RNA sequence: GGGAACGACUCGAGUAGAGUCGAAAAAAGCCGCGCAAGAUUGGACCAUACUUUCUAUCUAAGGUAACUAUCACUUACUGGCUUGAUGGAUGCGUAUUUUUGUCGGUACCAGCUUCUGAAAUAUCGACACUCCAGGAUCCUUCGGGAUCCUGGAGUGAAAAGAAACAACAACAACAAC
Reactivity to 2A3 in 0.01 (KOAc 150mM, MgCl2 10mM, bicine 150mM(pH8.5), 24C), signal-to-noise 1, nucleotides 027 to 126: a010a000g060c040c000g000c020g030c040a010a090g010a020u030u120g090g030a060c100c000a010u030a100c070u000u180u030c040u070a040u030c000u070a040a030g030g040u040a020a050c090u130a150u300c010a080c040u000u090a010c010u050g000g070c010u070u070g010a030u020g050g000a010u020g000c010g080u000a150u010u030u000u000u140g070u040c000g000g040u000a090c010c000a000g080c060u010u000c000u080g010a010a150a000u250a090u090c040g030a050